[RMDB]
RNA sequence: GGGAACGACUCGAGUAGAGUCGAAAACAUUUGCCAAAGAUGUUUUCAUUAAUCAAGAACGAAAGUUAGGGGAUCAAAGACGAUCAGAUACCGUCGUAGUCUUAACUAUAAACUAUACCGACUCGGGAUCGGCUGGAAUAAAUGUCCAGUCGGCACCUCUACUCUCCUCGUUCGCGAGGAGAGUAGAAAAAGAAACAACAACAACAAC
Reactivity to 2A3 in 0.01 (KOAc 150mM, MgCl2 10mM, bicine 150mM(pH8.5), 24C), signal-to-noise 2, nucleotides 027 to 156: c000a000u020u010u130g140c080c030a100a060a030g010a000u000g020u000u020u010u050c060a070u120u240a070a090u110c060a040a010g030a080a050c110g000a140a120a050g000u060u060a030g000g010g030g020a050u100c080a160a090a040g030a020c000g010a000u090c070a040g040a180u120a110c030c060g000u010c000g030u020a000g050u010c000u020u030a020a000c030u020a010u130a210a050a010c030u020a010u030a140c010c050g010a010c030u050c030g020g010g120a110u030c000g000g000c000u000g000g030a060a010u130a150a220a070u300g040u000c000c000a000g010u010c000g000g000c010a070c000c000
The record gives the reactivity of an RNA of 207 nucleotides to 2A3.
It was measured as part of the RMDB library PDB130.
The reactions ran in a buffer of 150 mM KOAc, 10 mM MgCl2 and 150 mM bicine (pH 8.5), at 24 C.